[RMDB]
RNA sequence: GGGAACGACUCGAGUAGAGUCGAAAAGAUAUGGACCUAAGUGGAGCCUGUAUCGGAAACGAUAUAAAGGCGUUGAAACUUCAGGUCCUAAGUCAAAAGUCGAACGGUAGUUCGCUACCGUUCGACACGAUAAUGUCUUGUUCGCAAGACAUUAUCGAAAAGAAACAACAACAACAAC
Reactivity to 2A3 in 0.01 (KOAc 150mM, MgCl2 10mM, bicine 150mM(pH8.5), 24C), signal-to-noise 5, nucleotides 027 to 126: g000a000u010a000u050g000g000a000c000c000u010a020a010g030u010g010g030a010g010c010c010u010g000u010a000u000c000g000g010a000a000a000c000g000a000u010a000u050a100a300a040g000g000c010g030u180u030g000a000a000a000c010u030u110c260a010g020g000u000c000c000u010a000a000g000u000c000a030a040a040a100g000u010c000g010a000a000c000g000g000u010a010g030u080u100c300g030c150u000a000c000c000g000u000u000c000g000a000c000a000
Reactivity to DMS in 0.01 (KOAc 150mM, MgCl2 10mM, bicine 150mM(pH8.5), 24C), signal-to-noise 7, nucleotides 027 to 126: g000a010u000a010u010g000g000a010c000c000u000a010a010g010u000g010g010a020g030c000c000u000g000u000a000u010c000g020g000a000a010a020c000g010a010u000a000u000a050a130a050g020g020c000g010u000u010g000a190a190a010c000u000u000c300a000g010g010u000c000c000u000a000a080g000u000c000a080a120a140a140g010u000c000g010a010a010c000g000g000u000a010g010u000u010c260g020c000u000a010c000c000g010u000u000c000g010a000c010a010
This 177-nucleotide RNA was probed chemically with 2A3 and DMS. For 2A3, 43,559 sequencing reads were counted. The reactions ran in a buffer of 150 mM KOAc, 10 mM MgCl2 and 150 mM bicine (pH 8.5), at 24 C. DMS adducts were read by reverse transcription with MarathonRT. The data come from the RNA Mapping Database (RMDB), library TTRDES. Values cover nucleotides 27 to 126.